[RMDB]
RNA sequence: GGGAACGACUCGAGUAGAGUCGAAAAAUAUACCGGUCGCUCAAAGUGGCAGCUGCCACCAGCGCCGAGUCGGUGAUGCGCACCCCGUGGUGCACCUCGUAGCGGUCUUUGAGCCCGCGCAGGAUGCCAUGCACAGUGUCUUCGGACACUGUGCAUGAAAAGAAACAACAACAACAAC
Reactivity to 2A3 in 0.01 (KOAc 150mM, MgCl2 10mM, bicine 150mM(pH8.5), 24C), signal-to-noise 4, nucleotides 027 to 126: a000u220a000u060a040c000c010g000g040u160c060g010c000u050c100a100a100a000g000u010g000g000c070a150g110c120u280g030c070c010a040c010c040a020g000c010g000c000c030g000a010g080u060c070g020g040u050g020a070u120g020c080g000c030a090c020c000c010c040g100u150g050g030u050g000c050a040c000c010u020c120g040u030a070g000c020g040g010u050c040u080u150u220g090a070g010c000c020c000g000c000g020c030a000g050g030a130u110g010c010
Reactivity to DMS in 0.01 (KOAc 150mM, MgCl2 10mM, bicine 150mM(pH8.5), 24C), signal-to-noise 3, nucleotides 027 to 126: a040u020a080u000a080c090c000g000g000u010c020g000c010u000c070a080a100a110g020u000g000g000c000a190g000c140u060g000c070c030a040c060c040a120g000c080g020c060c030g000a110g020u000c050g000g000u000g010a030u010g010c120g020c080a130c050c000c040c090g000u010g000g000u000g040c000a020c000c000u010c070g020u010a140g020c030g000g000u000c000u020u040u020g010a110g000c110c000c020g020c040g000c030a030g000g020a110u020g020c010